An RNA of 177 nucleotides, treated with 2A3 and read out base by base. The data come from the RNA Mapping Database (RMDB), library OK2TRN.
[RMDB]
RNA sequence: GGGAACGACUCGAGUAGAGUCGAAAAUGAAUGGCACUGGGCAGAAAUAACAGAGUCAGGGUCCACCCUUUGCAUAGGUUGUGUCCGUGCGGAUGUCCCAUGGAUGGUCAUUGGCCCACCCUCCAUCAUCCGACCUACUAUUCGUAGUAGGUCGGAUAAAAGAAACAACAACAACAAC
Reactivity to 2A3 in 0.01 (KOAc 150mM, MgCl2 10mM, bicine 150mM(pH8.5), 24C), signal-to-noise 1, nucleotides 027 to 126: u060g010a000a000u090g040g010c000a010c070u030g040g000g020c010a030g250a100a140a070u250a040a040c050a020g040a040g170u100c060a030g040g010g000u000c000c030a100c060c000c000u000u060u260g040c100a120u140a180g130g000u080u020g090u120g010u000c010c040g080u060g000c050g000g110a040u060g080u120c030c000c020a000u110g040g000a060u060g080g000u020c060a080u110u080g000g010c000c040c000a010c000c040c000u010c000c010a030u000c020
The reactions ran in a buffer of 150 mM KOAc, 10 mM MgCl2 and 150 mM bicine (pH 8.5), at 24 C. The 2A3 profile rests on 892 reads.